[RMDB]
RNA sequence: GGGAACGACUCGAGUAGAGUCGAAAAUCACGGUGCACGCCUCGUUGGCGAUCGGGAACGACGUCGAGCAGCGGCUGGCCCGGGUGAAGCCUCAACUUGCCCUGUACCUGGGCGGCAUGGGCGCCAAGGUCCUCCACCGAUUCGUCGGUGGAGGACCAAAAGAAACAACAACAACAAC
Reactivity to 2A3 in 0.01 (KOAc 150mM, MgCl2 10mM, bicine 150mM(pH8.5), 24C), signal-to-noise 3, nucleotides 027 to 126: u090c020a020c080g000g000u150g020c030a030c110g000c000c000u060c050g110u040u080g030g030c040g040a230u010c020g010g030g050a030a050c040g040a000c010g060u020c020g020a060g050c050a010g030c000g080g000c000u030g120g000c010c000c010g030g000g000u030g100a110a030g000c020c000u030c060a080a150c110u110u300g000c000c000c010u100g150u190a150c000c010u050g000g010g000c110g010g030c060a150u250g030g020g020c030g000c010c010a080a100
Reactivity to DMS in 0.01 (KOAc 150mM, MgCl2 10mM, bicine 150mM(pH8.5), 24C), signal-to-noise 1, nucleotides 027 to 126: u060c050a170c110g020g000u020g000c090a110c290g010c030c000u000c160g020u020u000g060g000c000g010a130u000c000g000g060g080a150a200c000g030a000c040g040u000c000g060a000g050c080a140g000c150g000g030c010u000g000g070c000c000c020g030g080g050u000g020a100a200g000c000c080u000c210a270a110c040u090u020g000c050c010c000u030g030u060a090c100c000u040g000g000g000c020g000g000c010a120u100g030g030g020c000g020c030c010a140a130
Description
The record gives the reactivity of an RNA of 177 nucleotides to 2A3 and DMS. For 2A3, 1,609 sequencing reads were counted. The reactions ran in a buffer of 150 mM KOAc, 10 mM MgCl2 and 150 mM bicine (pH 8.5), at 24 C. The DMS profile rests on 1,207 reads. DMS (dimethyl sulfate) methylates the pairing face of unpaired adenines and cytosines. As a SHAPE reagent, 2A3 marks flexible, mostly unpaired nucleotides at the ribose 2'-OH. Source: RMDB library OK1LIB, as collected in RNAgym.